This 207-nucleotide RNA was probed chemically with DMS and 2A3.

[RMDB]
RNA sequence: GGGAACGACUCGAGUAGAGUCGAAAAUCAUGUAAACACUUCUCACAGGCAGCUUAACCACUUGAGUGUGUCUGGCCUUCAAAGCCAGCGGGAGAGGCCAAGGAGGGAGGUACUGAACUCCCUUAGGGGAUAAUGAUUUAUCUCCCGUGCAGGUGGAUACCGCAUGAUUAUUCGUAAUCAUGCGGUAAAAAGAAACAACAACAACAAC
Reactivity to DMS in 0.01 (KOAc 150mM, MgCl2 10mM, bicine 150mM(pH8.5), 24C), signal-to-noise 1, nucleotides 027 to 156: u020c030a090u000g010u010a130a130a100c030a080c040u000u000c000u010c000a080c030a060g000g040c010a060g000c050u000u000a030a110c060c050a070c040u010u010g030a090g030u000g020u000g050u000c040u000g020g020c010c030u040u000c170a100a090a090g020c000c040a090g000c070g030g020g000a090g000a040g000g020c000c030a030a110g000g000a070g010g030g020a030g020g000u000a210c170u010g000a080a090c030u000c000c000c020u000u000a050g020g020g010g030a100u000a070a070u010g020a220u000u000u000a050u000c010u000c000c010c010g020u000g000c030a040g010g010u000g010g000a300
Reactivity to 2A3 in 0.01 (KOAc 150mM, MgCl2 10mM, bicine 150mM(pH8.5), 24C), signal-to-noise 3, nucleotides 027 to 156: u090c040a030u170g070u200a010a130a060c030a020c080u060u060c040u030c000a080c010a020g020g030c020a040g000c040u070u100a040a060c070c010a020c060u060u110g010a030g080u150g030u010g060u030c000u020g010g000c000c010u150u130c080a100a070a050g030c030c010a020g020c020g010g010g000a030g010a010g030g020c020c030a040a050g140g020a010g020g010g010a000g000g020u060a160c060u140g090a130a110c000u010c010c000c000u010u030a060g000g030g000g030a020u080a170a060u150g110a030u020u170u090a040u020c010u000c050c000c000g010u060g030c070a020g000g030u030g040g020a030
Source information:
The DMS profile rests on 3,091 reads. For 2A3, 1,685 sequencing reads were counted. The data come from the RNA Mapping Database (RMDB), library OK3TST. DMS adducts were read by reverse transcription with MarathonRT. The reactions ran in a buffer of 150 mM KOAc, 10 mM MgCl2 and 150 mM bicine (pH 8.5), at 24 C.